[RMDB]
RNA sequence: GGGAACGACUCGAGUAGAGUCGAAAACGGAAGAGGGCGUGAGAGAUCCAGCCUACCGAUUCAGGCUUCGCCUUCCGGCCUGAAUCGGGAAAACUCAGGAAGGCUGUGGGAGAGGACACCCUGCCCGUGGGAGGUCCCUCCCGAGAGCGAAAACACGGUAAAGGUGUUACUUCGGUAACACCUUUACAAAAGAAACAACAACAACAAC
Reactivity to 2A3 in 0.01 (KOAc 150mM, MgCl2 10mM, bicine 150mM(pH8.5), 24C), signal-to-noise 1, nucleotides 027 to 156: c010g020g060a050a010g030a050g040g010g000c030g020u070g010a130g000a010g000a050u050c040c020a010g040c010c000u000a020c010c000g000a000u000u000c000a000g000g010c010u030u040c100g000c010c010u010u010c010c000g010g000c010c000u030g000a000a000u000c000g010g000g000a000a000a000a010c120u110c060a020g000g000a000a000g000g000c010u010g060u040g000g000g020a070g000a130g000g000a010c000a050c000c000c010u030g080c000c020c060g060u060g020g030g000a130g000g000u000c000c010c010u000c000c000c000g000a010g010a000g000c060g040a040a020a030a030c090a050c040g010
Source: RMDB library RSTRND, as collected in RNAgym. The record gives the reactivity of an RNA of 207 nucleotides to 2A3. The RNA was probed in 150 mM KOAc, 10 mM MgCl2 and 150 mM bicine (pH 8.5) at 24 C. 2A3 adducts were read by reverse transcription with SuperScript II with manganese.